[RMDB]
RNA sequence: GGGAACGACUCGAGUAGAGUCGAAAAGUCUAGCGAAAGGAUCCCACCCGGGACACACGCAAGUCGCGAAUUAAGCCGACCGGCCAAGGUCAAUCGCAGAACUCAACUGCAUGAGUAAGCUAGACGACAUUAUCCAUCCAUUCGUGGAUGGAUAAUGAAAAGAAACAACAACAACAAC
Reactivity to 2A3 in 0.01 (KOAc 150mM, MgCl2 10mM, bicine 150mM(pH8.5), 24C), signal-to-noise 6, nucleotides 027 to 126: g010u000c000u010a010g000c010g090a130a030a060g130g030a090u010c010c010c000a030c000c020c010g000g010g050a030c020a010c010a010c100g040c040a070a040g120u090c050g000c010g080a100a180u240u090a180a060g060c060c040g040a030c000c010g040g020c050c030a070a040g030g000u020c000a020a040u080c050g000c020a010g030a150a060c050u070c200a070a120c040u050g000c020a050u090g020a020g110u030a020a020g000c010u010a010g000a010c000g000a000
Reactivity to DMS in 0.01 (KOAc 150mM, MgCl2 10mM, bicine 150mM(pH8.5), 24C), signal-to-noise 7, nucleotides 027 to 126: g020u000c010u000a000g010c010g010a080a170a120g000g010a080u000c000c000c010a160c300c040c110g010g000g000a110c110a100c050a090c100g010c030a080a070g010u010c070g010c010g020a090a160u020u010a070a120g020c060c050g020a110c010c190g010g020c030c080a110a130g020g000u000c010a100a090u010c100g010c020a030g000a080a090c120u010c160a050a080c040u010g010c030a080u000g000a090g000u010a090a170g010c000u000a000g010a010c010g010a200

The record gives the reactivity of an RNA of 177 nucleotides to 2A3 and DMS. Source: RMDB library OK2TRN, as collected in RNAgym. The reactions ran in a buffer of 150 mM KOAc, 10 mM MgCl2 and 150 mM bicine (pH 8.5), at 24 C. Reactivities are given for positions 27 through 126. For 2A3, 11,306 sequencing reads were counted.